Structure probing data (DMS and 2A3) for a 177-nucleotide construct. The RNA was probed in 150 mM KOAc, 10 mM MgCl2 and 150 mM bicine (pH 8.5) at 24 C.
RNA sequence: GGGAACGACUCGAGUAGAGUCGAAAACCUAAGAGUUUCGGAGAGUUCUUAGGUGGGGGUGUACUGGCUUCGACAGGGCGGGCAAAGGUGCGCAGGCAACUCGUCAGGCGAUCGACGUUAAUGAAGCAGUAAAUUCGAGGUUCGCCUCGAAUUUACUAAAAGAAACAACAACAACAAC
Reactivity to DMS in 0.01 (KOAc 150mM, MgCl2 10mM, bicine 150mM(pH8.5), 24C), signal-to-noise 2, nucleotides 027 to 126: c000c010u000a040a010g010a050g000u010u030u000c030g030g000a120g000a210g020u020u000c000u010u000a050g040g000u010g050g000g000g000g000u020g000u030a040c110u010g000g000c050u000u040c080g020a090c120a060g030g000g020c060g100g050g040c040a030a140a100g000g020u000g000c000g000c070a060g000g020c020a080a030c130u000c000g020u000c000a070g020g000c030g050a050u030c030g010a060c030g000u000u000a050a050u010g000a010a300g000c130
Reactivity to 2A3 in 0.01 (KOAc 150mM, MgCl2 10mM, bicine 150mM(pH8.5), 24C), signal-to-noise 2, nucleotides 027 to 126: c000c000u000a040a000g040a010g060u030u070u200c110g030g020a070g040a020g050u080u020c000u010u020a010g020g000u050g010g000g000g000g020u040g020u050a100c060u050g060g000c000u050u030c080g040a050c040a050g000g080g020c060g010g000g020c000a030a090a020g040g030u050g030c000g010c020a010g040g000c030a040a030c020u000c010g000u000c000a020g040g040c010g010a020u030c020g020a020c030g040u030u010a070a000u150g010a010a010g000c020